[RMDB]
RNA sequence: GGGAACGACUCGAGUAGAGUCGAAAAUGUAUCUAUAGUAAGAAGUAAUGUUAACUACGUAGCUGACUAUUUAAGUGAUUAUGAAGAAUACAAUAGUAUUGUUCUCGAUUUAAGAGAUUUAGACUUAUGUUUUGGCUCUUUGGAAUUACAACUACCAUAGUAUGCAAGUAUUCGUACUUGCAUACUAAAAAGAAACAACAACAACAAC
Reactivity to DMS in 0.01 (KOAc 150mM, MgCl2 10mM, bicine 150mM(pH8.5), 24C), signal-to-noise 5, nucleotides 027 to 156: u000g000u000a080u000c040u000a130u000a130g000u000a060a090g020a100a220g020u000a070a070u000g010u000u010a060a090c060u000a100c150g020u000a070g030c020u000g010a070c050u000a100u000u000u010a070a160g010u000g010a100u000u000a070u010g000a090a140g000a060a040u000a040c030a070a100u010a120g010u000a140u000u000g010u000u000c010u000c040g020a170u000u000u010a070a120g010a110g020a070u000u000u000a080g010a050c030u000u000a060u000g010u010u010u000u000g020g000c030u000c030u000u000u010g020g010a120a080u000u000a050c040a050a090c050u000a090c030c020a200
Reactivity to 2A3 in 0.01 (KOAc 150mM, MgCl2 10mM, bicine 150mM(pH8.5), 24C), signal-to-noise 6, nucleotides 027 to 156: u100g020u020a050u050c030u040a050u050a120g050u050a070a110g010a100a020g040u100a080a090u090g040u120u090a060a040c040u070a040c100g070u040a020g020c030u020g070a050c030u040a070u130u100u070a070a010g010u010g040a030u030u070a040u180g030a030a040g020a060a020u090a080c030a040a070u050a110g040u020a040u040u070g020u080u000c020u010c030g060a080u000u080u180a100a040g020a010g010a030u060u060u060a030g010a010c000u050u070a040u120g070u050u060u040u050g030g020c010u010c000u060u040u040g000g050a030a020u080u050a040c020a070a020c080u060a030c000c030a000